[RMDB]
RNA sequence: GGGAACGACUCGAGUAGAGUCGAAAAAUUUACAUAUUCAUUCCGAUCGAUUCGCCCAAAAGGACAUUGAGUCGAUGUCUACUUACUAGUGUCCUCGACUAAUGGGCCUCUUGUCACAAUUGCCGUCACGAAAAUUAGUCUUCGGACUAAUUUUCGUAAAAGAAACAACAACAACAAC
Reactivity to 2A3 in 0.01 (KOAc 150mM, MgCl2 10mM, bicine 150mM(pH8.5), 24C), signal-to-noise 5, nucleotides 027 to 126: a000u160u140u110a090c070a070u240a140u130u140c080a030u150u000c010c020g040a060u050c020g030a050u110u000c020g020c000c000c000a050a110a020a030g020g000a000c000a010u030u130g220a020g010u010c000g010a000u040g030u010c060u090a070c010u180u150a110c070u180a040g010u020g010u040c020c040u000c020g010a000c000u070a040a040u070g020g160g070c020c010u020c020u040u080g080u060c030a010c070a090a170u080u090g040c040c030g110u140c030
Reactivity to DMS in 0.01 (KOAc 150mM, MgCl2 10mM, bicine 150mM(pH8.5), 24C), signal-to-noise 2, nucleotides 027 to 126: a060u030u000u000a130c040a090u020a080u010u020c050a110u030u010c010c050g020a110u020c040g050a070u000u020c060g000c070c030c030a040a060a050a080g000g000a090c020a010u000u010g000a050g010u000c020g030a020u000g000u000c010u000a040c040u000u030a100c180u040a040g010u000g000u000c010c000u010c070g030a080c030u010a010a070u000g000g000g000c040c040u020c050u000u000g000u000c060a050c130a070a140u020u030g000c020c000g010u030c110

Structure probing data (2A3 and DMS) for a 177-nucleotide construct. Conditions: 150 mM KOAc, 10 mM MgCl2 and 150 mM bicine (pH 8.5), 24 C. It was measured as part of the RMDB library OK1LIB. The 2A3 profile rests on 2,830 reads. The DMS profile rests on 2,124 reads.